Chemical mapping of a 207-nucleotide RNA with DMS and 2A3. The 2A3 profile rests on 673 reads. Values cover nucleotides 27 to 156. The reactions ran in a buffer of 150 mM KOAc, 10 mM MgCl2 and 150 mM bicine (pH 8.5), at 24 C. The data come from the RNA Mapping Database (RMDB), library OK3TST. 2A3 adducts were read by reverse transcription with SuperScript II with manganese.
[RMDB]
RNA sequence: GGGAACGACUCGAGUAGAGUCGAAAAUGUGGUCUGAGGGUUCCAGUGUUGCUUGGUUAGAUAAGCUGAGGAGUGAGAAGUAAUCAGACCUUCACUUGGUGGGCCCGAGUGUACUGUGCAGAGACUACUUGUACCUACAAGACCUGCUACUCGCCAAUCAUAGUAUCCGGUUCGCCGGAUACUAUGAAAAAGAAACAACAACAACAAC
Reactivity to DMS in 0.01 (KOAc 150mM, MgCl2 10mM, bicine 150mM(pH8.5), 24C), signal-to-noise 1, nucleotides 027 to 156: u010g010u000g040g010u000c000u020g010a120g000g000g000u000u000c000c040a140g000u000g020u000u010g000c010u010u000g030g000u010u000a110g020a190u000a060a090g050c040u050g010a120g020g010a080g000u000g020a210g020a120a070g000u000a150a100u000c030a090g000a020c000c030u000u000c060a080c080u010u010g020g070u010g000g030g040c040c000c020g000a160g030u000g010u010a060c010u000g010u000g010c010a150g030a260g000a180c010u000a040c040u000u000g030u000a070c070c040u000a050c040a030a060g010a060c030c000u000g020c010u000a070c010u010c000g000c050c010a040a300
Reactivity to 2A3 in 0.01 (KOAc 150mM, MgCl2 10mM, bicine 150mM(pH8.5), 24C), signal-to-noise 2, nucleotides 027 to 156: u170g020u020g030g010u040c000u030g020a040g000g080g000u070u020c010c020a040g000u020g010u090u130g070c010u020u060g050g100u130u050a020g020a180u120a200a090g020c050u030g020a030g040g020a070g090u040g040a190g010a090a020g030u250a010a050u010c000a010g010a050c000c000u010u040c030a030c030u030u040g020g000u080g020g150g050c000c040c030g000a040g010u040g000u030a140c070u040g030u060g090c020a060g110a020g010a180c030u050a020c000u130u010g020u020a120c030c080u010a020c010a000a020g010a070c000c010u010g030c040u040a080c000u040c000g090c050c050a030a020